[RMDB]
RNA sequence: GGGAACGACUCGAGUAGAGUCGAAAAGUAGGGUUUGAUUAGUAGGUCAAGGAUCUGCGUGUAGUGAGUGCCAAGGUGUUAUCCCUUGGGUGUUAGACUCGGCUACUCUGACAGCCUGAAGGGAUGACCGCCGUACGAGGUUCGCCUCGUGUGGCGGAAAAGAAACAACAACAACAAC
Reactivity to 2A3 in 0.01 (KOAc 150mM, MgCl2 10mM, bicine 150mM(pH8.5), 24C), signal-to-noise 8, nucleotides 027 to 126: g060u060a030g010g020g010u070u060u050g100a090u070u060a040g100u040a020g040g030u010c030a030a060g090g020a090u030c010u030g010c030g010u040g010u020a050g030u020g070a020g010u040g070c020c010a060a020g060g010u070g050u190u150a060u070c000c000c000u000u000g030g010g000u040g040u020u060a020g000a010c010u000c060g040g000c020u040a020c020u000c010u030g020a030c010a030g200c010c010u080g090a030a010g020g000g000a020u030g030a030
Reactivity to DMS in 0.01 (KOAc 150mM, MgCl2 10mM, bicine 150mM(pH8.5), 24C), signal-to-noise 7, nucleotides 027 to 126: g000u010a060g000g000g020u000u010u010g010a090u020u020a100g020u010a050g010g010u000c040a020a090g000g010a060u010c010u010g010c050g020u010g010u010a030g010u010g000a040g010u010g010c030c020a060a050g010g010u010g010u010u020a050u010c080c000c000u000u000g000g000g010u010g010u000u010a070g000a020c050u010c050g000g010c040u010a040c190u000c020u000g000a080c090a030g020c000c000u020g010a070a060g000g010g000a050u010g000a170